Chemical mapping of a 207-nucleotide RNA with 2A3 and DMS. As a SHAPE reagent, 2A3 marks flexible, mostly unpaired nucleotides at the ribose 2'-OH. For 2A3, 1,947 sequencing reads were counted. Values are in units of 0.01, from 0 to 300, in steps of 10.

RNA sequence: GGGAACGACUCGAGUAGAGUCGAAAAAGAAUUGUACCACCACUGCGUAUCCUAAACGGGCUCUGCAGUGGUUAUUCUUGUAACGUACUAGGAGUGAAUAGUGGCCCGUAUUGCAGGCAUUAACAUUAAAAGGCAAUCCACUUCGGUGGAUUGCCAACAUCAUCAAGAGGUUCGCCUCUUGAUGAUGAAAAGAAACAACAACAACAAC
Reactivity to 2A3 in 0.01 (KOAc 150mM, MgCl2 10mM, bicine 150mM(pH8.5), 24C), signal-to-noise 3, nucleotides 027 to 156: a000g100a020a040u130u090g050u100a050c040c040a000c000c000a000c010u010g000c010g060u060a080u140c020c000u100a180a150a100c090g020g000g030c030u040c070u150g000c000a020g000u000g000g000u000u010a000u000u000c000u020u100g030u050a100a020c070g050u000a030c050u070a080g020g040a060g030u070g050a110a120u080a120g050u050g050g030c040c010c020g020u050a160u040u160g030c080a050g030g010c030a040u090u140a100a030c010a020u110u190a050a100a000a010g010g000c000a000a000u000c000c000a000c020u020u040c140g040g000u000g000g000a000u000u010g000c000c010a000a000
Reactivity to DMS in 0.01 (KOAc 150mM, MgCl2 10mM, bicine 150mM(pH8.5), 24C), signal-to-noise 2, nucleotides 027 to 156: a070g020a050a050u000u030g020u000a040c100c120a130c010c000a020c000u010g000c010g020u010a070u010c060c020u010a020a150a110c110g000g040g030c030u000c070u000g010c010a020g020u000g030g000u000u000a010u000u000c030u010u010g000u010a150a110c030g030u000a070c090u000a070g010g000a110g050u020g010a080a120u010a080g020u000g010g030c010c030c010g010u010a130u000u000g000c030a040g010g020c060a080u000u000a060a070c100a100u000u000a050a080a100a200g000g020c010a030a020u000c000c000a000c010u000u000c300g040g050u020g000g000a020u000u000g020c000c000a010a030
Reactivities are given for positions 27 through 156. The RNA was probed in 150 mM KOAc, 10 mM MgCl2 and 150 mM bicine (pH 8.5) at 24 C. 2A3 adducts were read by reverse transcription with SuperScript II with manganese.